[RMDB]
RNA sequence: GGGAACGACUCGAGUAGAGUCGAAAAGGAUCCUACCAUCACAGGACGGUAACUGCGUCCCGUACAGUUACCACUGUGAUGGAUGGCUGUGAUUGUACGGGACCACGGCUAGAUGAAUAUAGGAUCGCUAGAUGUGUGUAUUCGUACAUACAUCUAGAAAAGAAACAACAACAACAAC
Reactivity to DMS in 0.01 (KOAc 150mM, MgCl2 10mM, bicine 150mM(pH8.5), 24C), signal-to-noise 9, nucleotides 027 to 126: g000g000a010u000c000c000u000a120c010c000a000u000c000a010c010a010g000g010a180c190g010g000u000a010a010c010u000g010c100g000u000c020c020c030g010u010a130c000a010g000u000u000a010c000c010a100c000u000g010u000g000a010u000g000g010a040u000g000g000c010u000g010u000g000a110u000u010g010u010a070c150g010g000g000a040c080c010a010c000g010g000c000u000a040g010a160u010g000a000a000u010a180u000a010g010g000a010u000c000g010
Reactivity to 2A3 in 0.01 (KOAc 150mM, MgCl2 10mM, bicine 150mM(pH8.5), 24C), signal-to-noise 9, nucleotides 027 to 126: g020g000a000u000c000c000u000a030c000c000a000u000c000a000c000a000g030g070a050c060g010g000u010a010a000c000u010g010c010g050u040c000c010c000g010u080a020c000a000g000u000u000a000c000c000a010c000u000g000u000g000a010u010g000g000a000u010g000g000c000u000g000u010g010a110u100u090g050u090a040c030g030g040g020a000c000c000a000c000g000g000c000u010a020g010a180u130g040a000a000u140a010u020a000g000g000a000u000c000g000